The data come from the RNA Mapping Database (RMDB), library OK3TST. Structure probing data (DMS and 2A3) for a 207-nucleotide construct. The RNA was probed in 150 mM KOAc, 10 mM MgCl2 and 150 mM bicine (pH 8.5) at 24 C.

[RMDB]
RNA sequence: GGGAACGACUCGAGUAGAGUCGAAAACUCUAGCAAUUGUCAGGUGAAUGCUUGCAAGGUAAUGUGCUGAAUACAGCGAUACUAAGAGGGUAUUAAAACAGUCCCUGCCUUCAGGAAGCUUUCAUAAUGUAGAUGGAGAGAAGAGAUACACAUAAAACCUUUUAAAUCAUUUCGAUGAUUUAAAAGGAAAAGAAACAACAACAACAAC
Reactivity to DMS in 0.01 (KOAc 150mM, MgCl2 10mM, bicine 150mM(pH8.5), 24C), signal-to-noise 2, nucleotides 027 to 156: c030u000c020u040a160g000c060a070a050u020u000g040u010c030a080g010g020u010g020a050a090u000g030c000u000u010g000c070a100a100g010g000u000a040a090u000g000u000g020c000u020g000a120a150u000a090c080a070g020c000g030a100u000a100c100u010a080a180g010a050g030g050g070u000a170u010u000a050a060a070a130c060a160g000u000c010c000c000u000g000c020c000u000u000c040a100g040g010a050a040g020c020u000u000u000c010a080u000a070a060u000g000u010a060g000a130u010g020g010a050g030a090g010a080a110g000a090g010a100u000a080c060a040c080a120u020a040a050a100a130
Reactivity to 2A3 in 0.01 (KOAc 150mM, MgCl2 10mM, bicine 150mM(pH8.5), 24C), signal-to-noise 5, nucleotides 027 to 156: c030u040c030u050a040g040c040a140a150u080u120g060u100c040a040g040g030u020g050a050a010u040g010c010u020u100g090c040a020a020g020g000u060a070a090u100g080u070g040c000u000g030a080a050u200a140c040a010g040c030g050a030u050a100c030u090a140a030g030a070g120g070g010u030a050u050u180a130a090a030a020c010a010g040u030c000c000c000u010g010c000c000u020u020c010a010g080g050a030a010g000c000u020u040u000c040a060u070a170a070u100g050u070a050g030a130u070g000g030a010g010a010g010a090a000g010a010g020a020u070a090c100a000c010a060u190a130a110a040a060